[RMDB]
This 177-nucleotide RNA was probed chemically with 2A3 and DMS. The RNA was probed in 150 mM KOAc, 10 mM MgCl2 and 150 mM bicine (pH 8.5) at 24 C. The 2A3 profile rests on 38,726 reads. High 2A3 reactivity points to a flexible backbone, as in loops and unpaired stretches. For DMS the reverse transcriptase was MarathonRT. Reactivities are given for positions 27 through 126. 2A3 adducts were read by reverse transcription with SuperScript II with manganese. For DMS, 22,504 sequencing reads were counted. The data come from the RNA Mapping Database (RMDB), library TTRDES.
RNA sequence: GGGAACGACUCGAGUAGAGUCGAAAAGAUAUGGAUCAUCUUGACAUGAAGUUAUUCGGAAACGAAUAUACUUCAACAGCAAGCCCGGUGAUCCUAAGUCAAACAUAAGCAGUUCGCUGCUUAUGAACUAUCACUAAGAGUUCGCUCUUAGUGAUAGAAAAGAAACAACAACAACAAC
Reactivity to 2A3 in 0.01 (KOAc 150mM, MgCl2 10mM, bicine 150mM(pH8.5), 24C), signal-to-noise 8, nucleotides 027 to 126: g020a000u040a020u080g000g000a000u000c010a000u000c010u060u120g130a250c070a300u300g000a010a000g000u000u010a000u010u000c000g000g010a030a010a010c000g000a000a000u020a010u030a030c000u010u000c010a030a040c010a010g210c040a110a090g020c030c050c020g010g010u010g000a000u000c000c000u010a030a010g010u010c070a170a050a140c000a060u010a000a010g000c000a000g020u070u200c300g100c190u000g000c000u010u000a010u000g000a020a020
Reactivity to DMS in 0.01 (KOAc 150mM, MgCl2 10mM, bicine 150mM(pH8.5), 24C), signal-to-noise 9, nucleotides 027 to 126: g000a030u000a070u010g010g000a010u000c000a010u000c000u010u010g020a050c050a160u010g000a010a010g010u000u000a010u000u000c000g010g000a040a030a060c000g020a020a000u000a010u020a010c000u000u000c000a160a140c270a170g010c230a070a120g000c080c050c300g000g010u000g000a010u000c000c000u000a010a110g000u000c010a140a100a270c010a010u000a000a010g000c010a010g020u000u020c300g030c000u000g000c000u000u000a000u000g010a100a210